The record gives the reactivity of an RNA of 177 nucleotides to DMS and 2A3. DMS adducts were read by reverse transcription with MarathonRT. The data come from the RNA Mapping Database (RMDB), libraries RFM100 and RFMREP.
[RMDB]
RNA sequence: GGGAACGACUCGAGUAGAGUCGAAAAAGAGCUCCAUACGUGGAGCUCAAGAUUAGUGUAAUUCCCGGCAAUAAGGACAGGGAAGCUUCCACCGGCCAACCGUAAAUUGGCUGUCACCACUUCUCAAUGUACGUGGAAGAUUCGUCUUCCACGUACAAAAAGAAACAACAACAACAAC
Reactivity to DMS in 0.01 (KOAc 150mM, MgCl2 10mM, bicine 150mM(pH8.5), 24C), signal-to-noise 3, nucleotides 027 to 126: a140g000a010g000c000u010c000c000a050u010a050c190g050u030g020g010a000g000c000u000c000a020a050g000a170u000u000a120g010u030g030u000a120a140u000u000c000c020c020g030g020c120a080a110u030a070a120g000g000a030c150a070g020g010g010a010a020g000c100u010u010c040c020a040c120c000g000g010c000c000a020a030c040c060g070u010a040a040a170u000u000g000g010c000u000g010u010c060a150c120c080a100c060u010u000c000u000c020a050a240
Reactivity to 2A3 in 0.01 (KOAc 150mM, MgCl2 10mM, bicine 150mM(pH8.5), 24C), signal-to-noise 4, nucleotides 027 to 126: a000g000a000g000c000u000c000c000a000u010a040c300g070u050g000g000a000g000c000u000c000a000a000g000a030u150u180a040g060u030g030u120a030a050u020u010c000c000c000g010g030c080a080a100u200a200a080g080g010a030c030a030g050g000g060a040a020g010c010u060u010c030c020a060c010c010g040g000c000c000a020a000c040c040g280u300a090a050a050u000u010g010g020c010u000g040u030c030a030c070c020a030c010u040u010c010u000c000a040a070

Reactivities are rounded to 0.1 and cut off at 0 and 3.
The RNA was probed in 150 mM KOAc, 10 mM MgCl2 and 150 mM bicine (pH 8.5) at 24 C.